An RNA of 177 nucleotides, treated with 2A3 and DMS and read out base by base.

RNA sequence: GGGAACGACUCGAGUAGAGUCGAAAAAAUUUUAUAUUAAGGUCUGCACUUCACUUCUCGUUUAUAAUCUUAUGAUGACAUAGCAGGAGGUUGCUAUGUUGCCUGGCAGAGGCUUUGUAUCUGAUCGCGGUAUACUUAAUUUCGAUUAAGUAUACCGAAAAGAAACAACAACAACAAC
Reactivity to 2A3 in 0.01 (KOAc 150mM, MgCl2 10mM, bicine 150mM(pH8.5), 24C), signal-to-noise 7, nucleotides 027 to 126: a000a000u240u190u140u090a190u040a060u090u070a060a010g010g010u030c050u080g020c030a020c020u080u050c030a030c040u060u020c030u020c030g060u040u080u090a180u100a120a060u020c040u070u170a130u220g080a050u150g000a000c000a010u000a010g010c010a010g020g170a060g170g100u190u020g000c000u000a000u010g000u000u060g000c000c000u010g010g000c010a000g000a000g000g000c000u180u300u190g000u000a000u000c000u000g080a140u050c020g000
Reactivity to DMS in 0.01 (KOAc 150mM, MgCl2 10mM, bicine 150mM(pH8.5), 24C), signal-to-noise 5, nucleotides 027 to 126: a080a060u030u020u030u020a050u030a100u020u000a120a060g000g000u010c020u010g000c030a070c020u000u010c050a050c060u000u000c010u000c010g010u010u010u010a050u010a070a050u000c030u000u010a100u030g010a060u010g000a020c020a010u000a010g000c010a020g010g020a130g000g010u020u000g000c010u000a000u000g000u010u000g010c010c010u000g010g000c020a010g010a030g000g010c000u020u050u040g010u000a020u000c010u000g000a080u010c080g020